[RMDB]
RNA sequence: GGGAACGACUCGAGUAGAGUCGAAAAGGACAUGAUCAUGGUGAUCGAGUACUGCUAGGUCACAUGGUAUACUCACAUCUAGCACUCUCGAUCGUACACGCUCCAUGCAGUCUCAUGCUGACUAGCGACUUUAGGUGUUGUUCGCAACACCUAAAGUAAAAGAAACAACAACAACAAC
Reactivity to 2A3 in 0.01 (KOAc 150mM, MgCl2 10mM, bicine 150mM(pH8.5), 24C), signal-to-noise 6, nucleotides 027 to 126: g040g010a030c030a120u090g030a060u130c020a020u060g040g030u100g020a000u000c000g000a010g010u000a010c010u010g000c000u000a010g010g000u030c040a040c020a230u050g000g050u180a190u140a280c070u100c030a060c000a060u010c000u000a000g000c000a000c010u000c000u010c010g010a000u000c020g000u030a020c060a000c050g060c020u040c040c000a000u030g020c010a020g070u000c010u010c050a060u140g030c010u030g060a180c060u100a040g060c020g070
Reactivity to DMS in 0.01 (KOAc 150mM, MgCl2 10mM, bicine 150mM(pH8.5), 24C), signal-to-noise 8, nucleotides 027 to 126: g010g000a110c030a040u000g000a100u010c030a050u010g010g020u010g010a010u000c010g010a030g010u010a130c240u010g000c000u000a010g000g000u010c080a150c190a070u010g010g000u000a150u000a100c130u000c050a100c230a020u000c020u010a010g010c010a010c050u000c000u000c010g010a020u000c020g000u000a240c060a060c110g000c090u010c030c020a030u000g020c080a080g010u000c030u000c050a080u000g020c040u000g000a120c130u000a090g020c050g010